[RMDB]
RNA sequence: GGGAACGACUCGAGUAGAGUCGAAAAUAUAGUAUGGAGGAGGCUGGAAGUUAGAAGGAGAAUGGAAGGAAGGAGAAGAAGUCCAGGUAUUGGCACUGGAGCCUGGUAAAAAUCCAAGAGCCGUAAAACAUAUUGUCCGAUUCGUCGGACAAUAUGUAAAAGAAACAACAACAACAAC
Reactivity to DMS in 0.01 (KOAc 150mM, MgCl2 10mM, bicine 150mM(pH8.5), 24C), signal-to-noise 1, nucleotides 027 to 126: u010a080u000a100g010u010a090u010g010g000a090g020g000a030g000g060c080u000g010g010a060a080g010u000u010a060g010a060a040g020g010a030g020a050a040u000g000g020a090a040g010g000a050a040g020g010a120g010a060a090g010a040a100g000u010c050c030a010g020g020u010a100u010u010g010g000c010a030c070u000g010g010a080g010c020c000u000g010g010u000a010a030a030a050a060u010c040c010a040a120g020a120g040c040c000g030u010a040a020a090